Conditions: 150 mM KOAc, 10 mM MgCl2 and 150 mM bicine (pH 8.5), 24 C. This 177-nucleotide RNA was probed chemically with DMS and 2A3. Values cover nucleotides 27 to 126. The DMS profile rests on 2,457 reads. For 2A3 the reverse transcriptase was SuperScript II with manganese.
RNA sequence: GGGAACGACUCGAGUAGAGUCGAAAAGGGCGAUUGUCACUGUGGCGUCCGACGCCGCGCACACGCCGCGUAUUGGCAUGAGUGCUUAUGGCGCAUCGAAAGCGGCGCUGAAAAGCCUGGCGUUGAGGUCUUCGAUAAUCUUCGGAUUAUCGAAGACAAAAGAAACAACAACAACAAC
Reactivity to DMS in 0.01 (KOAc 150mM, MgCl2 10mM, bicine 150mM(pH8.5), 24C), signal-to-noise 3, nucleotides 027 to 126: g000g000g020c000g010a120u000u010g010u000c070a130c120u010g030u010g010g000c010g010u010c030c020g030a030c000g000c020c000g000c300g000c010a150c070a040c040g000c020c010g000c040g040u000a180u000u000g010g020c190a090u000g000a110g010u000g010c000u000u010a140u020g020g000c030g010c030a050u010c010g000a060a100a140g010c040g000g000c000g010c110u000g010a060a050a080a130g000c000c030u000g020g000c040g010u000u000g010a080g000
Reactivity to 2A3 in 0.01 (KOAc 150mM, MgCl2 10mM, bicine 150mM(pH8.5), 24C), signal-to-noise 2, nucleotides 027 to 126: g000g000g000c010g070a120u070u160g090u150c040a010c200u110g050u090g130g000c000g000u030c050c000g030a000c030g000c000c000g040c000g000c000a010c000a000c040g000c020c050g000c020g050u170a150u080u180g060g010c140a040u070g080a060g110u080g000c000u090u160a090u300g090g000c010g020c030a080u080c050g100a080a060a000g040c030g000g030c000g000c050u020g060a140a120a000a060g000c000c010u030g000g010c010g010u020u060g060a040g000
Reactivities are rounded to 0.1 and cut off at 0 and 3. DMS adducts were read by reverse transcription with MarathonRT.